About this RNA:
An RNA of 177 nucleotides, treated with DMS and read out base by base. Source: RMDB library TTRDES, as collected in RNAgym.
RNA sequence: GGGAACGACUCGAGUAGAGUCGAAAAAAAAAAAAGAUAUGGAGUGCGACUCCAGUGAAAGUACUAAGACAGAAGAUCGGAAACGAUCUUUCGAGUACGAGGAGACGCACUCCUAAGUCAAAAAAAAGAUGUAGAAGUAGUUCGCUACUUCUACAUCAAAAGAAACAACAACAACAAC
Reactivity to DMS in 0.01 (KOAc 150mM, MgCl2 10mM, bicine 150mM(pH8.5), 24C), signal-to-noise 1, nucleotides 027 to 126: a000a000a000a000a140a090a000a140g010a050u010a040u050g010g000a030g000u000g050c030g010a090c000u000c000c000a140g030u000g000a210a030a140g000u000a000c020u010a300a090g010a010c300a050g000a000a000g000a000u000c010g020g000a010a050a030c000g010a000u000c050u010u000u000c030g000a030g060u000a010c020g010a100g020g000a020g010a080c000g030c000a000c000u000c000c000u000a010a080g000u040c000a020a000a040a110a040a150a140a080